The record gives the reactivity of an RNA of 177 nucleotides to DMS and 2A3.
For DMS the reverse transcriptase was MarathonRT.
The reactions ran in a buffer of 150 mM KOAc, 10 mM MgCl2 and 150 mM bicine (pH 8.5), at 24 C.
For DMS, 16,463 sequencing reads were counted.
It was measured as part of the RMDB library TTRINS.
[RMDB]
RNA sequence: GGGAACGACUCGAGUAGAGUCGAAAAGAUAUGGACCGACCUUCGCUUGGAUUUAUGGGUGUAGACGUCUAUGUCGGAAACGACAUAGACGUUGAGGCCCAUUGUCAGCGAAUGUCGGUCCUAAGUCGUAUGUAGUAUUGUUCGCAAUACUACAUACAAAAGAAACAACAACAACAAC
Reactivity to DMS in 0.01 (KOAc 150mM, MgCl2 10mM, bicine 150mM(pH8.5), 24C), signal-to-noise 6, nucleotides 027 to 126: g010a100u010a300u010g000g000a020c000c000g000a020c000c080u010u000c010g010c010u000u010g020g000a020u010u010u010a000u000g010g000g020u000g000u000a300g000a000c000g010u000c000u000a000u000g000u000c000g010g000a140a090a250c010g010a010c000a010u000a000g000a000c000g000u000u000g010a190g010g000c000c000c000a000u000u000g000u000c010a030g000c000g010a030a010u000g010u000c000g000g010u000c000c000u000a010a090g010u010c120
Reactivity to 2A3 in 0.01 (KOAc 150mM, MgCl2 10mM, bicine 150mM(pH8.5), 24C), signal-to-noise 5, nucleotides 027 to 126: g070a040u180a110u230g010g000a000c010c000g000a000c000c020u010u000c000g030c050u150u300g290g010a110u300u300u110a030u080g010g000g020u300g030u150a020g000a010c000g000u000c000u000a000u000g000u010c010g000g000a040a090a030c000g000a000c010a010u000a000g000a000c000g000u000u000g000a000g000g000c000c000c000a000u000u010g000u000c000a000g000c020g010a000a000u010g000u010c000g000g000u010c000c000u000a000a000g000u010c020